[RMDB]
RNA sequence: GGGAACGACUCGAGUAGAGUCGAAAAAAGCCGUGGGACAUGGAAGAGAACCAUGGAAACCACUGACUAGUGUUCAGCUUGAUUAGGAUGAACCUCGGCACUUGGUUGUGCAGGAACAAAGGUGAGACUUUAGCCCGAUCAGGAGUGGAAAUGGGUGCGUGUCAUUCGAUUUCGAUCGAAUGACACGAAAAGAAACAACAACAACAAC
Reactivity to 2A3 in 0.01 (KOAc 150mM, MgCl2 10mM, bicine 150mM(pH8.5), 24C), signal-to-noise 2, nucleotides 027 to 156: a000a000g100c000c030g020u040g000g010g010a040c000a030u050g040g010a150a020g080a080g040a160a050c030c000a030u020g000g000a010a090a050c050c020a020c060u070g060a060c040u090a050g030u040g030u110u040c040a030g070c060u060u060g070a130u130u200a040g030g030a030u070g050a020a000c000c010u040c050g050g000c010a030c050u040u100g100g010u110u040g050u040g050c060a030g100g020a040a030c060a120a050a020g040g010u030g020a040g010a010c000u040u010u090a010g040c030c020c020g000a040u070c030a020g020g080a050g020u030g020g030a020a080a080u140g030g000g010u070g050

The record gives the reactivity of an RNA of 207 nucleotides to 2A3.
The reactions ran in a buffer of 150 mM KOAc, 10 mM MgCl2 and 150 mM bicine (pH 8.5), at 24 C.
The 2A3 profile rests on 1,087 reads.
High 2A3 reactivity points to a flexible backbone, as in loops and unpaired stretches.